The record gives the reactivity of an RNA of 177 nucleotides to DMS.

[RMDB]
RNA sequence: GGGAACGACUCGAGUAGAGUCGAAAAUGAACAUUCUUACCGAUUUGUGCGCAAGAACCCACUGUUGCCCAUGUGUCGACCAUGGUGCCUUCAUCAACAAAGGCACCGAUAUUAACGUAGGAAGGCAAAGUAGGGGCAAGUUCGCUUGCCCCUACUUAAAAGAAACAACAACAACAAC
Reactivity to DMS in 0.01 (KOAc 150mM, MgCl2 10mM, bicine 150mM(pH8.5), 24C), signal-to-noise 1, nucleotides 027 to 126: u000g020a140a090c150a040u010u000c010u000u030a100c040c030g000a110u010u000u030g020u010g020c180g000c040a090a090g020a080a140c060c020c030a100c030u010g020u000u000g000c040c000c050a080u010g020u030g030u000c050g010a150c060c040a060u020g010g010u000g000c000c000u010u000c100a110u000c270a060a130c140a020a010a000g000g000c000a000c000c000g000a030u000a050u000u010a140a070c170g000u000a150g020g020a070a140g000g010c060a030

The reactions ran in a buffer of 150 mM KOAc, 10 mM MgCl2 and 150 mM bicine (pH 8.5), at 24 C.